[RMDB]
RNA sequence: GGGAACGACUCGAGUAGAGUCGAAAAGACCGAAGCGAGGAGGAAAGCAAAGAAAGCAACGGGGCUAGCCGUCAGGUGUUCCACCCCCCGAGAGGGGACGAGUGAGGCUUAUCCCGGGGAACUCGGCCUCUGUUCGUAAGUUCGCUUACGAACAGAGAAAAGAAACAACAACAACAAC
Reactivity to DMS in 0.01 (KOAc 150mM, MgCl2 10mM, bicine 150mM(pH8.5), 24C), signal-to-noise 1, nucleotides 027 to 126: g010a170c020c070g030a140a100g030c140g010a000g020g010a070g030g010a030a020a090g070c090a150a070a070g000a090a090a050g010c050a060a100c060g000g000g010g000c110u000a080g020c030c030g000u000c170a030g010g010u020g020u000u000c030c030a070c070c010c020c000c000c000g000a170g010a170g000g020g010g000a030c090g030a020g000u010g000a210g000g000c030u010u000a150u000c030c000c020g020g010g020g010a140a040c030u000c030g000g030c120